[RMDB]
This 177-nucleotide RNA was probed chemically with DMS and 2A3. The data come from the RNA Mapping Database (RMDB), library OK2TRN. For DMS the reverse transcriptase was MarathonRT. Reactivities are rounded to 0.1 and cut off at 0 and 3.
RNA sequence: GGGAACGACUCGAGUAGAGUCGAAAAGAAGCUAACAUCUCAAUUCUGCUGAAGAUAUUCUCGGUCAGUAGAGCAUAACUUCCAGCCGCUUGCAUGCAUUUGAUAUGAUGAUUUUACCAGCAUGCCCCUUGUCUGGUGUUUUCGAACACCAGACAAGAAAAGAAACAACAACAACAAC
Reactivity to DMS in 0.01 (KOAc 150mM, MgCl2 10mM, bicine 150mM(pH8.5), 24C), signal-to-noise 1, nucleotides 027 to 126: g000a040a080g000c050u020a090a150c040a060u000c020u000c090a090a180u000u000c080u000g010c010u000g000a050a090g000a080u010a090u000u000c040u000c020g000g010u000c130a040g040u020a080g010a050g030c100a030u000a030a040c020u010u000c070c090a040g010c050c140g000c140u000u020g010c050a070u010g000c030a110u000u010u000g020a130u030a050u000g000a070u020g000a140u000u000u010u020a050c110c090a050g000c050a080u000g000c000c060c000
Reactivity to 2A3 in 0.01 (KOAc 150mM, MgCl2 10mM, bicine 150mM(pH8.5), 24C), signal-to-noise 1, nucleotides 027 to 126: g020a040a000g000c020u040a040a010c020a120u030c050u000c060a010a110u140u000c000u060g060c030u030g000a000a020g020a100u070a040u020u070c010u020c000g130g090u210c140a100g050u100a030g050a000g000c060a070u050a040a010c000u010u010c100c000a020g040c020c090g000c060u120u170g030c020a020u120g000c010a040u000u000u230g180a080u180a110u150g120a050u010g050a050u060u060u060u200a080c040c030a010g000c010a030u050g000c000c000c000